Source information
Source: RMDB library OK2TST, as collected in RNAgym. The record gives the reactivity of an RNA of 177 nucleotides to 2A3 and DMS. Values cover nucleotides 27 to 126. For DMS, 2,151 sequencing reads were counted. For 2A3, 1,497 sequencing reads were counted.
RNA sequence: GGGAACGACUCGAGUAGAGUCGAAAAAGAAAGCCGAUGACCGUGGCGAUGGCGAGCGUACAGAGGAUUAUCCCAAGCUGCUGGAAUACGGUCUGGACAAGAAGGUCGCCGGCAAACUGGAUGAGAAGAUUUAGCAUCAGUUCGCUGAUGCUAAAUCAAAAGAAACAACAACAACAAC
Reactivity to 2A3 in 0.01 (KOAc 150mM, MgCl2 10mM, bicine 150mM(pH8.5), 24C), signal-to-noise 2, nucleotides 027 to 126: a000g090a040a050a000g030c000c000g030a080u070g010a000c000c000g040u070g030g070c080g020a020u090g020g040c080g040a020g010c050g050u120a080c040a060g130a130g100g010a060u080u130a080u250c020c000c020a000a000g000c010u080g000c000u020g000g050a060a010u110a040c000g020g000u000c000u000g010g000a020c020a090a050g160a040a010g130g040u030c040g060c060c030g070g000c000a050a120a050c050u070g030g070a090u110g040a070g020a190a020
Reactivity to DMS in 0.01 (KOAc 150mM, MgCl2 10mM, bicine 150mM(pH8.5), 24C), signal-to-noise 3, nucleotides 027 to 126: a090g000a100a150a190g020c020c030g010a090u000g020a040c050c000g020u000g000g000c070g000a140u010g010g000c040g000a060g020c080g010u000a050c120a090g010a100g010g010a170u010u000a090u000c020c010c020a070a140g020c080u010g020c040u000g000g000a130a090u020a090c060g000g010u010c010u000g020g010a060c100a070a130g010a100a080g010g020u000c020g020c110c030g020g040c030a030a060a120c060u000g010g000a180u000g000a100g010a160a110